[RMDB]
RNA sequence: GGGAACGACUCGAGUAGAGUCGAAAAAGCGGACUUACGAGUCCGCAGCAGUCAACGGUACCGGAGGCGGUCUGUGCCGAGGAUAAGGAGUUGACGGCUAAACCACUACGCCGGAUACGUCCGGCGACUAUGAAUCCACGUUCGCGUGGAUUCAUAGAAAAGAAACAACAACAACAAC
Reactivity to 2A3 in 0.01 (KOAc 150mM, MgCl2 10mM, bicine 150mM(pH8.5), 24C), signal-to-noise 9, nucleotides 027 to 126: a000g020c000g000g010a000c010u050u100a040c240g040a020g000u000c000c000g000c000a000g000c000a010g000u000c010a000a010c010g100g050u110a120c040c020g110g170a050g040g030c030g050g110u200c170u250g270u300g010c010c000g020a040g020g020a130u120a140a060g130g030a110g030u000u000g010a010c000g000g000c000u080a090a070a020c000c020a040c070u160a040c020g000c000c000g000g000a020u030a080c210g080u020c000c000g000g000c000g000a000
Reactivity to DMS in 0.01 (KOAc 150mM, MgCl2 10mM, bicine 150mM(pH8.5), 24C), signal-to-noise 5, nucleotides 027 to 126: a100g020c000g000g030a000c000u010u030a060c180g020a060g000u000c000c000g030c010a000g000c000a030g010u000c000a020a010c020g020g010u020a100c020c000g000g000a250g010g020c000g010g020u050c170u020g010u020g020c030c000g000a300g010g010a110u020a120a100g000g040a200g000u000u000g000a030c010g000g020c000u010a040a120a120c020c020a130c190u020a140c020g030c000c000g000g000a060u010a130c210g030u010c000c000g000g000c000g010a050